The record gives the reactivity of an RNA of 177 nucleotides to DMS and 2A3. Conditions: 150 mM KOAc, 10 mM MgCl2 and 150 mM bicine (pH 8.5), 24 C. Values are in units of 0.01, from 0 to 300, in steps of 10. The DMS profile rests on 3,067 reads.
RNA sequence: GGGAACGACUCGAGUAGAGUCGAAAAUCUAACUCAUUCGUGAGUUAGAGUGAGCGCAGCGACCAUUGCGCCGGUGGCGCGCUGUCGGUGCCGCGCGUGGCGAUAGUGCUUGCUUCGGCAAGCACAAGCUUUACUUGUGCUUCGGCACAAGUAAAGCAAAAGAAACAACAACAACAAC
Reactivity to DMS in 0.01 (KOAc 150mM, MgCl2 10mM, bicine 150mM(pH8.5), 24C), signal-to-noise 3, nucleotides 027 to 126: u000c000u000a000a000c000u000c010a060u000u010c150g040u000g020a020g000u000u000a020g000a040g000u010g010a170g020c060g020c030a040g010c020g020a080c040c070a100u000u000g010c010g020c030c030g020g020u000g030g030c020g000c000g020c140u010g000u010c110g020g000u000g000c010c040g010c020g000c030g030u010g010g010c090g020a120u000a070g010u000g000c000u000u000g000c000u000u010c190g010g010c010a000a010g010c000a000c000a020a060
Reactivity to 2A3 in 0.01 (KOAc 150mM, MgCl2 10mM, bicine 150mM(pH8.5), 24C), signal-to-noise 1, nucleotides 027 to 126: u000c000u000a000a000c000u000c020a030u070u090c170g110u030g030a010g000u000u000a000g000a010g040u110g090a090g000c070g000c060a060g000c010g120a140c010c010a050u060u210g030c000g000c000c040g140g120u150g090g120c070g000c010g030c120u060g110u120c060g040g180u060g010c060c000g040c020g000c020g010u070g070g020c020g050a040u130a110g000u020g020c020u010u010g000c030u050u040c160g090g000c000a000a000g000c000a000c000a000a000